[RMDB]
RNA sequence: GGGAACGACUCGAGUAGAGUCGAAAAGAAACUUAAAGAAAUUGACGGAAGGGCACCACAAGGCGUAAACUUUUACCGCUAGCCGCAGUAACUCUGCGCCGAACAGCAGCCCGAAAGGGUGAUGUGGUGACCCUCUAAACAGUAAAUGCUAGUCCAGCUAUUGAUGGUAGUUCGCUACCAUCAAUAGAAAAGAAACAACAACAACAAC
Reactivity to 2A3 in 0.01 (KOAc 150mM, MgCl2 10mM, bicine 150mM(pH8.5), 24C), signal-to-noise 3, nucleotides 027 to 156: g030a010a070a000c130u160u140a040a190a040g130a050a220a160u120u100g030a040c050g020g020a050a010g030g010g000c010a000c010c000a010c000a020a040g010g000c020g010u030a090a160a100c080u060u150u080u040a030c020c030g010c040u060a020g080c080c040g000c010a010g020u010a010a010c020u000c020u120g000c000g010c000c010g020a030a010c030a060g090c030a030g020c000c000c010g010a000a010a010g000g010g000u060g030a080u050g000u000g000g000u020g080a250c000c000c000u000c000u000a010a010a000c020a000g030u090a020a080a030u070g030c040u040a030g070u060c060c040a030g020
Reactivity to DMS in 0.01 (KOAc 150mM, MgCl2 10mM, bicine 150mM(pH8.5), 24C), signal-to-noise 2, nucleotides 027 to 156: g020a210a090a100c040u000u000a070a110a140g000a060a060a120u000u010g040a170c120g000g000a080a020g050g000g020c010a080c000c020a010c040a110a260g000g060c030g000u140a040a110a060c050u000u000u000u000a040c000c010g020c030u000a250g020c180c180g010c000a030g000u000a060a070c130u000c020u000g010c010g010c030c000g020a060a170c080a130g020c110a200g010c000c010c000g020a080a080a210g000g000g000u000g020a170u000g010u000g020g030u000g000a050c000c000c000u000c010u010a020a070a150c080a060g020u000a050a150a110u000g030c000u000a090g010u000c030c020a130g000

Structure probing data (2A3 and DMS) for a 207-nucleotide construct. For 2A3, 2,101 sequencing reads were counted.